Chemical mapping of a 207-nucleotide RNA with DMS and 2A3.
[RMDB]
RNA sequence: GGGAACGACUCGAGUAGAGUCGAAAACUGAGGCAAAAGUGGGCGUUGAGUAAGCACAGGGCCGCUUGGGUGUCGGACAGGUGACGCAGGUCUGCGUAGACGUCCGCGGUCGCCCGCAAGGCCGUCCCGACGACCUCCCGCAUGAGUUUCAGGGAUAUAGUGAGCAGUAAUUCGUUACUGCUCACUAAAAAGAAACAACAACAACAAC
Reactivity to DMS in 0.01 (KOAc 150mM, MgCl2 10mM, bicine 150mM(pH8.5), 24C), signal-to-noise 1, nucleotides 027 to 156: c050u000g000a060g010g000c030a050a110a110a140g020u000g020g020g010c170g030u010u000g000a150g010u010a070a060g000c070a120c110a120g080g030g020c050c060g070c050u010u000g030g010g000u020g020u000c020g010g020a090c000a180g010g020u000g010a030c040g040c010a080g060g020u000c090u000g020c040g020u020a130g000a060c090g000u000c010c000g020c060g010g020u000c080g000c030c000c010g000c070a170a100g000g000c010c010g000u010c020c030c000g000a060c030g020a030c000c000u000c020c010c010g010c030a140u000g000a290g010u000u000u000c020a130g010g010g010a160u000a230
Reactivity to 2A3 in 0.01 (KOAc 150mM, MgCl2 10mM, bicine 150mM(pH8.5), 24C), signal-to-noise 1, nucleotides 027 to 156: c050u070g020a100g070g000c020a070a050a060a050g030u110g010g000g020c070g060u090u150g070a090g090u150a100a040g060c110a090c050a110g010g010g060c000c000g000c100u050u170g000g010g010u020g010u010c000g010g060a030c000a020g000g120u010g140a040c020g030c050a000g060g300u150c140u040g000c000g010u020a070g040a050c040g020u000c010c010g000c020g000g050u010c030g010c000c000c000g000c000a030a020g010g000c000c000g010u060c000c010c000g020a000c090g050a050c000c030u040c020c000c020g010c030a090u060g050a050g030u010u000u020c010a010g120g000g000a000u090a000

The DMS profile rests on 2,445 reads. Values are in units of 0.01, from 0 to 300, in steps of 10. The reactions ran in a buffer of 150 mM KOAc, 10 mM MgCl2 and 150 mM bicine (pH 8.5), at 24 C.